[RMDB]
RNA sequence: GGGAACGACUCGAGUAGAGUCGAAAAGACCCGUCGGGCGGCGAGGGCGAGAAACACGACACGGCCGGGCUCGUCGCUGUCGGGCUCGACGACGACCGGCACGCGUGGUUCGUCGAGGAUCGCACCGCUGUGCUGUCGCCGAUCGAGUGGCCUCGGCCAAAGAGUUGUUCUUCGGAACAACUCUUUGAAAAGAAACAACAACAACAAC
Reactivity to 2A3 in 0.01 (KOAc 150mM, MgCl2 10mM, bicine 150mM(pH8.5), 24C), signal-to-noise 2, nucleotides 027 to 156: g050a060c000c000c020g030u050c010g010g030g000c000g000g020c000g020a020g000g040g000c050g030a150g120a070a190a010c090a030c080g190a030c070a030c130g040g020c000c020g050g030g000c030u020c000g020u040c000g030c000u040g120u110c020g090g030g000c010u010c010g000a000c010g000a010c010g000a010c040c100g040g000c020a010c000g040c010g000u040g000g030u040u050c020g040u060c040g030a170g100g080a110u170c000g020c120a000c010c010g000c030u110g020u000g010c010u010g000u000c010g000c010c000g020a280u020c000g000a030g010u100g070g040c020c010u070c010g040g000c020
Reactivity to DMS in 0.01 (KOAc 150mM, MgCl2 10mM, bicine 150mM(pH8.5), 24C), signal-to-noise 2, nucleotides 027 to 156: g010a120c020c000c010g000u000c040g010g000g070c040g040g020c030g000a070g030g000g050c000g010a100g030a160a050a110c070a160c010g000a080c080a100c090g010g010c020c010g020g000g020c040u000c010g030u010c020g010c030u020g010u010c020g020g000g000c010u000c000g000a030c000g010a020c030g020a030c030c020g010g020c000a030c060g040c040g000u000g000g020u060u010c010g000u000c140g000a250g030g000a090u010c060g000c000a090c300c050g000c030u000g020u000g000c020u000g000u000c000g010c000c000g000a080u010c060g010a070g030u000g030g000c020c010u000c030g040g020c050